Chemical mapping of a 177-nucleotide RNA with 2A3 and DMS. 2A3 adducts were read by reverse transcription with SuperScript II with manganese. It was measured as part of the RMDB library OK2TRN.
RNA sequence: GGGAACGACUCGAGUAGAGUCGAAAACAGCGGCCACAACAUGAACCCUGUCUUCAUAUACUUGGUGCCGAAGCCCUGCCCCCGCGUGCGUAUCGUGCUCCCCGGUUUGUGCGCUCGGCCGGUACGCGAGCUAGCGAUAUUUCGAUAUCGCUAGCUCAAAAGAAACAACAACAACAAC
Reactivity to 2A3 in 0.01 (KOAc 150mM, MgCl2 10mM, bicine 150mM(pH8.5), 24C), signal-to-noise 1, nucleotides 027 to 126: c020a020g100c030g050g000c050c000a010c000a090a060c010a110u120g040a010a020c000c050c080u060g040u090c030u080u060c040a020u160a020u010a190c070u010u080g110g000u080g000c040c000g030a050a030g080c010c000c020u040g050c020c000c000c000c000g040c040g020u000g000c030g020u030a010u020c030g030u090g040c010u060c010c020c000c010g000g030u010u110u050g120u040g000c020g000c000u030c000g010g000c000c000g000g000u000a000c030g030c010
Reactivity to DMS in 0.01 (KOAc 150mM, MgCl2 10mM, bicine 150mM(pH8.5), 24C), signal-to-noise 2, nucleotides 027 to 126: c100a070g030c040g000g000c060c020a070c060a040a100c180a120u010g000a050a070c050c080c060u000g000u010c060u000u000c030a060u000a110u010a070c120u010u000g010g010u010g010c030c020g000a100a090g010c040c020c040u020g000c050c010c030c040c030g010c120g030u000g030c040g020u000a020u000c010g020u000g010c020u000c030c010c050c020g000g000u010u010u000g020u000g010c010g000c070u000c060g000g020c010c010g010g010u000a000c030g000c030